[RMDB]
RNA sequence: GGGAACGACUCGAGUAGAGUCGAAAACAUCCAUAAAGGUGAUGGUGCGCUCACCGUCAGCUCCGCUCAACUGCAAAAGCAGAAAGAGUCGUUGGAGGCGGCGUUGGCGUACGCCAGAAAGACAACGACCGCGAGUGAGGUUCGCCUCACUCGCGGUAAAAGAAACAACAACAACAAC
Reactivity to DMS in 0.01 (KOAc 150mM, MgCl2 10mM, bicine 150mM(pH8.5), 24C), signal-to-noise 1, nucleotides 027 to 126: c050a040u010c030c030a030u080a080a110a080g020g000u010g040a010u010g000g000u020g010c130g060c000u000c030a010c090c000g000u000c000a130g100c010u000c000c040g000c000u030c000a090a300c000u000g010c000a070a290a200a220g000c010a000g000a020a160a160g000a020g000u000c180g050u020u000g020g000a110g000g010c000g020g000c000g050u020u010g000g000c030g030u000a040c090g000c060c020a120g000a090a030a070g010a140c040a050a050c140g010
Overview
Chemical mapping of a 177-nucleotide RNA with DMS. Values cover nucleotides 27 to 126. For DMS the reverse transcriptase was MarathonRT. Conditions: 150 mM KOAc, 10 mM MgCl2 and 150 mM bicine (pH 8.5), 24 C. It was measured as part of the RMDB library OK2TST.